[RMDB]
RNA sequence: GGGAACGACUCGAGUAGAGUCGAAAAGAGUGUUAUAUUAUCACGCCUAAUCACUGACGCAUCAUUGUCACAUCAUUGAAGGUGAAGGCGUGACAAUGAGGUGUUAGUGAUAAGGCGUGAUGAUGUGAUAGACUUGUAUCUUCGGAUACAAGUCUAUAAAAGAAACAACAACAACAAC
Reactivity to DMS in 0.01 (KOAc 150mM, MgCl2 10mM, bicine 150mM(pH8.5), 24C), signal-to-noise 5, nucleotides 027 to 126: g000a090g020u000g010u010u010a040u000a010u000u000a010u000c000a000c000g020c000c000u000a140a030u000c000a000c000u000g000a010c010g020c010a060u000c010a010u000u000g000u000c000a010c000a080u000c010a070u010u000g020a180a160g020g010u010g010a040a090g010g020c180g010u000g000a000c000a000a010u000g010a010g010g030u000g000u000u000a000g010u010g000a000u000a030a010g000g000c000g020u000g000a000u000g000a000u000g010u000g000
Reactivity to 2A3 in 0.01 (KOAc 150mM, MgCl2 10mM, bicine 150mM(pH8.5), 24C), signal-to-noise 5, nucleotides 027 to 126: g170a050g050u140g040u210u070a070u020a000u110u000a000u010c000a000c000g010c000c000u030a030a020u000c000a000c000u000g000a000c000g000c000a020u010c000a000u000u000g010u010c000a000c000a010u020c010a020u030u170g250a190a060g220g040u120g060a050a030g180g020c140g010u000g000a000c000a000a000u000g000a000g000g000u010g000u010u010a000g000u010g000a000u010a000a000g000g000c010g000u000g000a000u000g000a000u000g000u020g020